[RMDB]
Chemical mapping of a 177-nucleotide RNA with DMS.
Conditions: 150 mM KOAc, 10 mM MgCl2 and 150 mM bicine (pH 8.5), 24 C.
The DMS profile rests on 718 reads.
The data come from the RNA Mapping Database (RMDB), library OK2TRN.
RNA sequence: GGGAACGACUCGAGUAGAGUCGAAAACAGUCACUCAUCCGUGCAAGCUCUCCAGAAGGGAUGCAAGCUCUCCAGAAGGGGUGUGAUCUCUGAGCAGUGGGGAGUGGAGUCACCACUCGGGACAUAGCGUAAAGCCACGGUUCGCCGUGGCUUUACGAAAAGAAACAACAACAACAAC
Reactivity to DMS in 0.01 (KOAc 150mM, MgCl2 10mM, bicine 150mM(pH8.5), 24C), signal-to-noise 1, nucleotides 027 to 126: c120a090g000u000c050a030c020u000c010a120u010c030c080g000u000g000c070a060a170g000c030u000c020u010c030c040a090g010a230a030g000g020g000a010u000g000c110a230a260g010c010u000c010u010c050c060a170g010a090a130g000g000g000g020u020g000u000g010a090u010c010u000c000u000g000a040g000c000a150g030u000g000g000g000g010a030g050u020g010g000a100g000u000c050a080c060c090a090c030u000c050g000g030g000a060c160a090u000a080g050